[RMDB]
RNA sequence: GGGAACGACUCGAGUAGAGUCGAAAAGCCAUAAUGAUUGAUCUGGAACCACAUAAUCCGUUUGAAUUGUGCAAUACUGGAAACAUAGCAGGAUACCCAGAAAGAAAAGGCGAGCUUAGACAAACGGUGUAGCAAGAUGGUUCGCCAUCUUGCUACAAAAAGAAACAACAACAACAAC
Reactivity to 2A3 in 0.01 (KOAc 150mM, MgCl2 10mM, bicine 150mM(pH8.5), 24C), signal-to-noise 3, nucleotides 027 to 126: g060c000c040a070u160a100a030u180g230a080u220u130g080a120u060c050u080g050g040a070a110c230c000a050c020a040u280a170a080u090c000c020g000u040u010u090g140a160a120u040u030g060u040g050c050a020a070u050a190c000u030g050g020a000a080a000c020a060u080a100g120c060a010g010g050a010u080a050c000c000c000a000g000a020a030a030g080a010a060a020a000g110g010c000g020a040g030c000u120u120a010g020a170c040a000a060a000c030g000g060
Reactivity to DMS in 0.01 (KOAc 150mM, MgCl2 10mM, bicine 150mM(pH8.5), 24C), signal-to-noise 2, nucleotides 027 to 126: g000c010c000a120u030a030a140u030g020a140u060u060g000a130u010c000u020g000g000a170a140c150c030a070c040a090u000a150a080u020c030c010g000u000u000u010g020a000a050u010u000g000u000g020c080a060a060u100a140c050u000g020g010a100a030a080c160a060u040a130g000c020a050g020g000a160u020a130c090c000c000a020g000a110a050a080g130a030a110a110a020g020g010c020g000a110g000c090u000u000a060g020a190c060a000a030a070c070g020g020
The record gives the reactivity of an RNA of 177 nucleotides to 2A3 and DMS. The RNA was probed in 150 mM KOAc, 10 mM MgCl2 and 150 mM bicine (pH 8.5) at 24 C. The DMS profile rests on 2,474 reads. Source: RMDB library OK1LIB, as collected in RNAgym.